Structure probing data (DMS) for a 177-nucleotide construct. Reactivities are given for positions 27 through 126. For DMS, 13,057 sequencing reads were counted.
RNA sequence: GGGAACGACUCGAGUAGAGUCGAAAAGAUAUGGAAAGAGGAACCGAGGUCCGCGGAUCUAAGACAGAAGUUCGGAAACGAACUUUCGAGAUCCGUCCGGACCGAUGAGGUUCCUCUUUCCUAAGUCCAAGUAGUAUUAGUUCGCUAAUACUACUUGAAAAGAAACAACAACAACAAC
Reactivity to DMS in 0.01 (KOAc 150mM, MgCl2 10mM, bicine 150mM(pH8.5), 24C), signal-to-noise 8, nucleotides 027 to 126: g010a060u000a190u010g010g000a010a010a010g000a030g020g010a020a010c000c000g000a100g020g010u000c000c000g020c020g000g000a010u000c000u010a190a150g020a130c300a120g000a020a010g010u000u000c000g000g000a070a070a120c000g010a010a010c000u000u000u000c020g000a020g010a010u000c000c010g010u010c200c080g020g000a000c000c000g000a030u010g010a210g000g010u000u000c000c000u000c000u000u000u000c000c000u000a010a060g000u000c020